[RMDB]
RNA sequence: GGGAACGACUCGAGUAGAGUCGAAAAGGCACGGUGCGCGUCGUGCCAUCCGUCUUCUGGUCGGUCACGACCGCAUAACCCCAUCCCUUGAGGGACGCCUCCAACGCUUGCCCGAAGGGCGAGCCGUCAUAGGAUAUAUAUUCGUAUAUAUCCUAUGAAAAGAAACAACAACAACAAC
Reactivity to 2A3 in 0.01 (KOAc 150mM, MgCl2 10mM, bicine 150mM(pH8.5), 24C), signal-to-noise 5, nucleotides 027 to 126: g020g000c050a020c200g040g000u020g010c030g020c130g010u010c000g010u010g020c030c000a020u040c000c000g100u040c050u290u100c120u230g070g020u050c080g010g030u170c030a000c030g010a010c000c000g000c000a030u030a060a070c010c010c000c000a030u030c020c010c020u030u150g080a290g010g000g020a020c030g020c010c010u060c040c030a100a040c060g000c000u020u050g010c000c020c000g250a190a190g000g000g000c000g010a000g000c010c010g010u010
Reactivity to DMS in 0.01 (KOAc 150mM, MgCl2 10mM, bicine 150mM(pH8.5), 24C), signal-to-noise 4, nucleotides 027 to 126: g010g010c060a070c190g000g000u020g010c010g010c160g000u010c010g000u010g000c120c020a010u010c010c020g010u040c130u020u030c260u030g030g020u000c080g010g000u040c030a010c000g000a030c000c010g000c040a000u010a120a130c060c020c020c040a220u010c010c000c020u040u030g030a130g000g010g000a090c120g010c020c000u010c080c130a100a110c240g000c000u000u000g000c020c030c000g040a170a110g000g010g000c000g010a020g000c020c150g000u020
Source information:
This 177-nucleotide RNA was probed chemically with 2A3 and DMS. The 2A3 profile rests on 38,323 reads. The DMS profile rests on 7,231 reads. 2A3 adducts were read by reverse transcription with SuperScript II with manganese. DMS adducts were read by reverse transcription with MarathonRT. The reactions ran in a buffer of 150 mM KOAc, 10 mM MgCl2 and 150 mM bicine (pH 8.5), at 24 C.